[RMDB]
RNA sequence: GGGAACGACUCGAGUAGAGUCGAAAAGUUUGCUAUACUAGUAAGGUUGAAUGAAUCAACCCUUGGUGCUUAGCUUCUUUCACCAAGCAUAUUACACGCGGAUAACCGCCAAAGGAGAAAAGAUGAACUGCCCGACGAUUCUUCGGAAUCGUCGGAACUUAGAUAGGGUGUUCGCACCCUAUCUAAGAAAAGAAACAACAACAACAAC
Reactivity to 2A3 in 0.01 (KOAc 150mM, MgCl2 10mM, bicine 150mM(pH8.5), 24C), signal-to-noise 6, nucleotides 027 to 156: g010u040u050u080g030c020u060a060u040a300c040u050a050g110u100a060a100g020g010u020u010g020a080a190u110g050a060a160u060c010a020a010c000c000c010u010u020g010g000u010g020c050u050u050a040g030c000u050u040c010u020u040u030c020a020c020c000a010a000g020c020a030u050a080u160u140a050c060a020c040g020c000g010g030a100u080a280a250c010c020g000c020c030a070a050a020g060g020a050g040a040a120a030a000g070a050u120g040a060a060c040u090g030c010c000c000g000a000c000g000a000u000u000c010u030u050c140g050g000a000a000u000c000g000u000c000g010g000a000a000
Reactivity to DMS in 0.01 (KOAc 150mM, MgCl2 10mM, bicine 150mM(pH8.5), 24C), signal-to-noise 3, nucleotides 027 to 156: g000u000u010u000g010c010u000a160u010a150c070u000a110g020u010a100a080g010g030u000u000g020a060a160u000g030a190a210u000c010a050a060c000c010c030u000u010g000g010u000g020c080u000u000a080g000c010u000u010c050u000u000u000c030a080c040c020a040a060g010c050a100u010a060u000u020a030c050a130c100g000c020g010g030a230u000a090a110c000c000g040c030c060a040a060a100g020g020a160g000a080a090a080a090g000a080u000g010a050a080c080u000g010c090c010c000g000a000c000g020a030u000u000c010u000u000c300g060g020a030a000u010c000g000u000c000g000g010a000a030